[RMDB]
RNA sequence: GGGAACGACUCGAGUAGAGUCGAAAAUCUGUCUAAACCGUUAUUAUUGAAUUUGAGUUGGCAACAGCAAGAGGGCGUUUUAACCCUGACAGAGCGCGGUGAUGACUCUCCGCUCGCACGGUUACCGGCAAUAAUUGUUCUUCGGAACAAUUAUUGCAAAAGAAACAACAACAACAAC
Reactivity to 2A3 in 0.01 (KOAc 150mM, MgCl2 10mM, bicine 150mM(pH8.5), 24C), signal-to-noise 2, nucleotides 027 to 126: u040c000u020g030u010c040u110a000a080a060c070c040g130u050u040a100u220u060a090u070u170g060a120a070u080u030u150g100a110g040u010u080g060g000c010a040a050c030a030g000c010a030a020g010a040g000g030g000c020g000u000u070u000u160a070a020c000c010c010u020g040a020c030a050g020a000g030c040g000c040g000g080u120g050a110u140g110a100c030u040c000u030c030c020g000c040u030c010g000c000a040c000g000g000u000u020a030c030c000g030
Reactivity to DMS in 0.01 (KOAc 150mM, MgCl2 10mM, bicine 150mM(pH8.5), 24C), signal-to-noise 3, nucleotides 027 to 126: u000c020u000g000u000c020u000a060a060a070c060c060g010u000u000a060u000u000a100u010u000g010a060a050u010u000u010g010a150g010u010u010g000g010c020a050a040c040a030g000c040a050a070g000a070g010g000g010c070g010u000u000u000u000a060a120c030c010c040u000g000a060c040a050g000a040g030c130g000c080g010g000u000g010a080u000g000a100c110u000c010u000c120c040g000c020u000c040g040c130a040c110g000g000u000u000a100c100c090g030